[RMDB]
RNA sequence: GGGAACGACUCGAGUAGAGUCGAAAAGCUCCGUUCACCAGAGCUCACUGGUGUUCGGCUAAGAUUAAAGAGCUCGCCUCUCGCACCCUGACCUUCGGGUCGCUUGAGGUUAAAUCAAUAGAAGGACACUAAGCAUGUAGACCUCAAGGCCUAGUGCGUGGAAACGUAAGUUCGCUUACGUUUCCACAAAAGAAACAACAACAACAAC
Reactivity to 2A3 in 0.01 (KOAc 150mM, MgCl2 10mM, bicine 150mM(pH8.5), 24C), signal-to-noise 3, nucleotides 027 to 156: g040c060u010c020c010g000u000u000c000a000c010c000a010g030a050g050c010u010c000a300c010u000g000g000u000g030u010u000c010g000g000c040u200a230a040g050a300u290u270a230a160a080g010a000g010c010u020c010g010c000c000u000c000u010c000g000c010a000c030c000c000u030g040a010c000c000u000u000c010g000g000g000u000c010g000c000u000u000g000a000g000g010u000u000a000a000a020u130c010a000a010u000a010g000a010a010g000g030a000c010a010c000u060a040a010g020c020a020u140g040u230a040g070a130c030c060u120c240a170a070g080g000c000c010u000a010g000u010g070c080
The record gives the reactivity of an RNA of 207 nucleotides to 2A3.
Source: RMDB library ARCHII, as collected in RNAgym.
The RNA was probed in 150 mM KOAc, 10 mM MgCl2 and 150 mM bicine (pH 8.5) at 24 C.
2A3 adducts were read by reverse transcription with SuperScript II with manganese.